Conditions: 150 mM KOAc, 10 mM MgCl2 and 150 mM bicine (pH 8.5), 24 C. Chemical mapping of a 177-nucleotide RNA with DMS and 2A3. It was measured as part of the RMDB library RFM100. Reactivities are given for positions 27 through 126. The 2A3 profile rests on 676 reads.
RNA sequence: GGGAACGACUCGAGUAGAGUCGAAAAAGGCGGUAAAUUGAUGGCUGGCCUGAUAUAAGGCUGGCGCACCGUAUCGGUGUCCCUGAGCAGACCGGCGGGACGAUUCUUUCAUGGCGGGGCCUGUGCAUAUUGGCACAGUCUUCGGACUGUGCCAAUAAAAAGAAACAACAACAACAAC
Reactivity to DMS in 0.01 (KOAc 150mM, MgCl2 10mM, bicine 150mM(pH8.5), 24C), signal-to-noise 2, nucleotides 027 to 126: a040g020g010c000g000g000u010a020a080a110u030u000g030a160u030g000g000c010u000g010g000c020c000u000g000a160u070a130u040a120a010g040g000c010u000g000g010c020g020c040a040c010c070g030u020a020u030c070g000g020u000g020u000c030c030c010u000g000a120g030c040a040g050a130c070c030g010g010c050g010g000g000a060c090g000a130u000u010c100u010u010u020c080a060u010g000g020c020g000g000g000g000c070c040u010g020u010g030c100a130
Reactivity to 2A3 in 0.01 (KOAc 150mM, MgCl2 10mM, bicine 150mM(pH8.5), 24C), signal-to-noise 1, nucleotides 027 to 126: a000g130g000c050g020g010u060a080a180a020u070u140g050a080u090g210g000c000u000g050g000c000c000u030g020a000u010a020u080a300a000g010g020c000u020g000g000c000g000c000a000c000c000g000u080a260u140c090g020g030u040g040u010c040c040c020u030g010a060g040c050a000g020a050c000c000g010g010c010g010g000g010a000c000g000a000u050u000c000u030u080u030c070a060u170g120g000c090g000g060g000g000c000c000u000g010u000g000c090a080